[RMDB]
RNA sequence: GGGAACGACUCGAGUAGAGUCGAAAAUAAUCGGGGAGCUGAUGGAGAACGGCUUGAGCCCAGGAGGCAGAGAUUGCAGUGAGCCAUGAUCACGCCACUGCAUUCCAGCCUAGGUGACAGAGCCAGACCCUGUCUCAAAAAGAAAAACAACAACACAACCACGGCAGCCUUUCGAGGCUGCCGUGGUAAAAGAAACAACAACAACAAC
Reactivity to 2A3 in 0.01 (KOAc 150mM, MgCl2 10mM, bicine 150mM(pH8.5), 24C), signal-to-noise 1, nucleotides 027 to 156: u160a020a050u110c020g000g000g000g000a020g010c030u040g050a090u070g100g000a050g010a060a050c030g020g020c030u010u040g020a010g010c000c010c000a040g080g060a020g010g040c040a020g040a010g000a090u010u020g000c000a000g000u000g030a030g000c000c050a080u160g040a070u190c090a010c070g000c000c000a020c000u000g000c000a000u010u010c010c000a000g000c000c000u000a010g020g020u030g010a010c020a080g070a010g030c010c000a010g000a050c000c000c000u040g030u050c040u010c040a010a040a000a000a010g220a000a150a110a000a000c000a000a000c000a000a000c000a050c000a130